Description
An RNA of 177 nucleotides, treated with 2A3 and DMS and read out base by base. The data come from the RNA Mapping Database (RMDB), library OK1LIB.

[RMDB]
RNA sequence: GGGAACGACUCGAGUAGAGUCGAAAAGAAGGAGAUGAAAGCGACUUUAGAAUCGGCUAACUGAGCAGGCAGAUACAGACGGCAAGUAUCGUCGCCAGAGAUACAGUCGCAAAUAGCCGAAGGAGAACCCUAAAUGAGUGUUCGCACUCAUUUAGGGAAAAGAAACAACAACAACAAC
Reactivity to 2A3 in 0.01 (KOAc 150mM, MgCl2 10mM, bicine 150mM(pH8.5), 24C), signal-to-noise 5, nucleotides 027 to 126: g120a040a020g040g050a080g000a020u140g100a150a050a000g010c000g020a020c020u100u180u070a090g070a100a060u060c010g000g020c040u080a080a080c030u050g000a010g070c070a130g040g000c040a050g010a010u030a040c020a030g140a050c040g090g050c080a120a000g000u000a000u020c010g010u010c010g000c020c000a010g000a000g010a040u080a070c050a020g000u010c000g010c040a000a010a020u040a000g000c000c000g010a010a010g170g060a070g030a030a030
Reactivity to DMS in 0.01 (KOAc 150mM, MgCl2 10mM, bicine 150mM(pH8.5), 24C), signal-to-noise 4, nucleotides 027 to 126: g010a090a080g010g010a070g010a060u000g000a060a060a140g000c040g020a060c020u000u020u000a090g010a130a120u020c020g010g010c010u000a070a190c050u000g000a070g000c010a080g020g030c020a080g010a050u000a020c030a080g000a090c110g010g010c100a060a070g010u020a010u000c010g010u050c080g020c050c010a050g000a080g020a110u010a040c100a040g000u000c080g000c060a050a060a090u030a050g010c000c000g000a100a080g010g010a100g010a140a130

The reactions ran in a buffer of 150 mM KOAc, 10 mM MgCl2 and 150 mM bicine (pH 8.5), at 24 C. For DMS, 7,328 sequencing reads were counted.